[RMDB]
RNA sequence: GGGAACGACUCGAGUAGAGUCGAAAAAGAGCCUGUCGGCCGUUCGCGUGGUUUCUCGCGAGACCGGAGGCACCGUGGCGCGACAGUGCGAGUGUGGUCACGUGCACGUGCUACAGAUACCUCUGGUGUGCGGAGUGACGGAGGAGCUGCGGGUGAAGUUAUCUGGGGUGUUCGCACCCCAGAUAACAAAAGAAACAACAACAACAAC
Reactivity to 2A3 in 0.01 (KOAc 150mM, MgCl2 10mM, bicine 150mM(pH8.5), 24C), signal-to-noise 1, nucleotides 027 to 156: a000g040a040g000c040c010u130g110u300c080g000g010c020c000g090u010u030c070g000c000g030u100g000g110u090u180u000c100u110c000g070c000g020a020g190a030c000c000g000g000a000g000g000c020a000c000c040g010u020g000g010c030g020c020g030a080c040a100g020u030g000c010g030a070g050u280g020u070g110g140u190c020a000c070g000u030g040c010a000c070g020u010g000c010u000a000c000a000g030a150u140a050c000c000u020c000u020g000g060u010g050u110g060c030g100g000a060g020u030g020a000c060g000g000a000g080g100a030g030c000u030g000c000g000g020g000u040g010a030a030
Chemical mapping of a 207-nucleotide RNA with 2A3. 2A3 adducts were read by reverse transcription with SuperScript II with manganese. For 2A3, 564 sequencing reads were counted. 2A3 is a SHAPE reagent: it acylates the 2'-hydroxyl of flexible nucleotides of all four kinds. The reactions ran in a buffer of 150 mM KOAc, 10 mM MgCl2 and 150 mM bicine (pH 8.5), at 24 C. It was measured as part of the RMDB library OK3TST.